[RMDB]
RNA sequence: GGGAACGACUCGAGUAGAGUCGAAAAGGGGUCAUACUUGGAUUUACUUGGACAACCCUCUUCAAUGAUGCAUGAAAACUGUUCUGAAGCCUCCACGGAACAGUUUUCAUGUUGAGAAGAGGGCUAAUCCAAGUUGUCAGUAUGACGGAGGCACCCAUCUGAAGAUUUACUUCGGUAAAUCUUCAGAAAAAGAAACAACAACAACAAC
Reactivity to 2A3 in 0.01 (KOAc 150mM, MgCl2 10mM, bicine 150mM(pH8.5), 24C), signal-to-noise 3, nucleotides 027 to 156: g060g020g040g010u010c000a010u020a010c050u100u150g120g020a080u190u250u190a040c000u000u000g000g000a030c030a050a060c050c000c020u000c010u010u010c050a220a300u200g060a060u210g040c020a000u000g000a000a000a000a000c000u000g000u000u010c020u030g080a140a120g040c040c030u060c030c010a020c030g000g000a000a000c000a000g000u000u000u000u000c000a000u010g000u000u000g010a020g000a000a000g000a000g000g010g000c000u010a010a010u010c000c000a000a000g000u000u010g010u000c000a010g000u000a010u000g000a010c010g000g010a020g000g020c020a030c020c000c000a030
Reactivity to DMS in 0.01 (KOAc 150mM, MgCl2 10mM, bicine 150mM(pH8.5), 24C), signal-to-noise 1, nucleotides 027 to 156: g000g020g010g000u000c000a030u000a020c000u000u000g060g000a100u010u000u010a050c040u010u000g010g070a080c030a100a060c000c000c000u000c010u010u020c010a120a150u000g020a100u010g000c000a010u000g010a000a020a010a000c010u000g000u000u000c000u010g020a080a080g000c040c020u000c000c050a300c050g030g040a020a000c000a040g010u000u000u000u000c000a010u010g010u000u000g010a300g000a020a000g010a000g050g040g010c000u000a020a050u000c000c000a000a060g010u010u000g010u000c060a080g040u000a000u000g010a020c040g000g010a090g040g020c080a250c000c000c010a300